Chemical mapping of a 207-nucleotide RNA with 2A3 and DMS. Values cover nucleotides 27 to 156. DMS adducts were read by reverse transcription with MarathonRT. As a SHAPE reagent, 2A3 marks flexible, mostly unpaired nucleotides at the ribose 2'-OH. The RNA was probed in 150 mM KOAc, 10 mM MgCl2 and 150 mM bicine (pH 8.5) at 24 C.

[RMDB]
RNA sequence: GGGAACGACUCGAGUAGAGUCGAAAAAUUCUUCGCGAUCCUUCCAGUACUCUUCGAGGGGAAACCCGUCUUUUUCUGCACGGUAAGAGCCCAACAUGUAGAACUGAUUGACUGCCUUGUAGGGACAGCAUCCCUUCUCCACUGGGAGAGAGUAUGCUAUUUCCUAGUUAUUCGUAACUAGGAAAUAAAAAGAAACAACAACAACAAC
Reactivity to 2A3 in 0.01 (KOAc 150mM, MgCl2 10mM, bicine 150mM(pH8.5), 24C), signal-to-noise 6, nucleotides 027 to 156: a000u050u030c010u080u120c050g000c010g070a050u020c010c010u000u000c010c000a040g030u070a120c040u060c100u300u200c090g020a020g000g010g000g020a040a100a090c050c040c000g050u100c040u020u120u030u070u040c050u070g030c040a010c020g040g000u050a170a050g040a070g110c040c060c010a030a030c000a030u080g080u120a060g040a210a080c050u040g040a220u070u080g060a070c010u010g010c000c020u020u040g050u050a060g000g000g020a030c010a020g020c010a060u040c010c000c000u030u010c030u020c020c030a040c050u050g030g010g000a010g000a000g000a000g030u110a040u230g000c010
Reactivity to DMS in 0.01 (KOAc 150mM, MgCl2 10mM, bicine 150mM(pH8.5), 24C), signal-to-noise 3, nucleotides 027 to 156: a160u000u000c010u000u000c060g030c090g010a050u000c020c010u000u000c020c010a120g000u000a070c040u000c050u000u010c050g020a080g030g010g030g010a050a080a120c140c030c060g010u010c020u010u000u000u010u010c040u000g020c050a030c030g010g010u010a070a170g000a090g010c070c040c020a040a040c020a060u000g010u000a030g010a040a150c110u000g020a100u000u020g020a110c020u000g010c000c000u000u000g020u000a140g030g000g010a030c010a050g000c020a300u010c010c000c000u000u000c000u010c010c030a130c070u000g010g010g010a040g010a070g020a170g000u000a050u000g010c050